[RMDB]
RNA sequence: GGGAACGACUCGAGUAGAGUCGAAAAUCAAACCCGCCCUUGUAGCUCAGUGGUUGAGCGCUUCACUCGUAUUCCAAUACUGCCAUGAAGAGGUCCGCGGUUCAAUCCCGCGUGGUGGCAAAAAAAACAUCAUGAAUAGGUUCGCCUAUUCAUGAUGAAAAGAAACAACAACAACAAC
Reactivity to 2A3 in 0.01 (KOAc 150mM, MgCl2 10mM, bicine 150mM(pH8.5), 24C), signal-to-noise 3, nucleotides 027 to 126: u090c000a010a020a100c010c000c000g040c010c010c000u090u080g120u120a050g000c010u020c060a050g030u090g140g110u180u060g030a010g020c020g010c000u060u060c030a050c040u040c030g030u050a130u100u050c020c000a040a030u050a160c040u060g010c010c010a020u040g040a110a070g040a040g140g040u010c030c020g010c000g010g000u030u060c030a050a050u050c000c010c000g000c010g000u030g020g020u010g010g000c000a000a000a000a020a000a000a050a080
Reactivity to DMS in 0.01 (KOAc 150mM, MgCl2 10mM, bicine 150mM(pH8.5), 24C), signal-to-noise 6, nucleotides 027 to 126: u000c120a080a070a160c030c010c020g020c060c020c020u000u000g030u000a100g010c020u000c040a060g010u000g010g010u000u010g010a040g010c030g000c060u000u000c040a070c030u000c040g010u000a110u000u000c050c050a090a090u010a090c090u000g000c020c020a040u000g010a100a090g000a090g010g010u000c060c010g010c010g000g000u000u000c240a090a220u010c270c000c010g010c010g020u000g020g020u000g010g030c030a000a000a000a030a040a050a050a100
Overview:
This 177-nucleotide RNA was probed chemically with 2A3 and DMS. Conditions: 150 mM KOAc, 10 mM MgCl2 and 150 mM bicine (pH 8.5), 24 C. It was measured as part of the RMDB library M2PK90.